[RMDB]
RNA sequence: GGGAACGACUCGAGUAGAGUCGAAAACGGACUUCGAGCGAUUGCUGAAUAACACAGGUUAUGUAGUAAUAUAGCCUGAGAAGUCUGACGGUAGUCGCUCAUGGUCUAUUAUGAGAAACUACGUCAGGGUACAGAUUCAUUUCGAUGGAUCUGUACCAAAAGAAACAACAACAACAAC
Reactivity to DMS in 0.01 (KOAc 150mM, MgCl2 10mM, bicine 150mM(pH8.5), 24C), signal-to-noise 8, nucleotides 027 to 126: c110g010g010a010c000u000u020c100g010a030g030c000g020a020u010u000g010c000u000g000a070a160u010a090a050c050a160c030a000g010g020u010u000a000u000g020u000a170g020u040a070a030u010a010u000a020g000c010c020u010g010a070g010a070a070g010u010c080u020g010a300c020g000g010u000a000g000u000c090g020c010u000c010a030u010g000g000u000c010u000a070u010u020a070u020g000a090g010a090a070a060c070u010a050c100g000u010c100a100g000
Reactivity to 2A3 in 0.01 (KOAc 150mM, MgCl2 10mM, bicine 150mM(pH8.5), 24C), signal-to-noise 9, nucleotides 027 to 126: c020g010g000a000c000u030u040c170g010a000g000c000g020a020u010u020g000c000u010g030a060a020u090a030a010c030a000c000a030g010g010u000u010a010u010g100u080a110g080u100a220a150u070a020u000a100g000c000c000u060g010a110g050a120a020g030u010c070u040g030a010c010g010g000u010a000g000u000c000g000c000u000c000a010u020g000g000u000c010u010a070u090u100a050u060g060a040g060a030a070a020c080u120a030c060g130u100c070a050g060
Chemical mapping of a 177-nucleotide RNA with DMS and 2A3.
For 2A3, 35,090 sequencing reads were counted.
Conditions: 150 mM KOAc, 10 mM MgCl2 and 150 mM bicine (pH 8.5), 24 C.